[RMDB]
RNA sequence: GGGAACGACUCGAGUAGAGUCGAAAAGAAUCACCGUACCUAUUUAGGUUUACGCUCCAAGAUCGGUGGAUAGCAGCCCUAUCAAUAUCUAGGAGAACUGUGCUAUGUUUAGAAGAUUAGCUAGUCUAUUACACAGCCAUGUUCGCAUGGCUGUGAAGUAAUACGGUCAGUUCGCUGACCGUAUUACAAAAGAAACAACAACAACAAC
Reactivity to 2A3 in 0.01 (KOAc 150mM, MgCl2 10mM, bicine 150mM(pH8.5), 24C), signal-to-noise 4, nucleotides 027 to 156: g080a060a050u120c000a000c010c010g020u030a020c000c010u090a140u200u200u300a020g000g020u000u030u040a020c040g020c010u010c010c000a000a010g000a020u010c020g030g000u020g080g000a030u040a020g090c120a010g000c020c030c020u070a060u160c040a100a020u040a000u180c020u000a000g010g000a030g020a020a010c040u040g050u060g080c000u040a030u090g050u100u140u070a150g040a200a060g030a200u080u060a010g020c000u000a000g040u020c040u040a130u110u180a060c000a000c000a000g000c010c000a010u000g020u040u060c140g010c080a000u000g000g000c010u000g000u010g000a000a000
Reactivity to DMS in 0.01 (KOAc 150mM, MgCl2 10mM, bicine 150mM(pH8.5), 24C), signal-to-noise 2, nucleotides 027 to 156: g000a100a110u000c000a110c040c010g000u010a040c030c000u010a210u000u000u000a020g040g000u000u000u000a040c040g030c010u000c050c010a100a100g020a040u000c050g000g010u010g010g010a080u000a060g000c010a160g000c090c050c060u000a100u000c000a070a140u000a080u010c070u000a070g030g000a040g020a100a050c070u000g000u040g010c010u000a040u000g000u000u000u000a120g000a090a130g000a120u000u000a060g020c040u010a100g000u000c030u000a060u010u010a210c000a010c010a000g020c000c010a020u000g020u000u010c220g020c020a040u000g010g000c010u000g030u000g020a000a070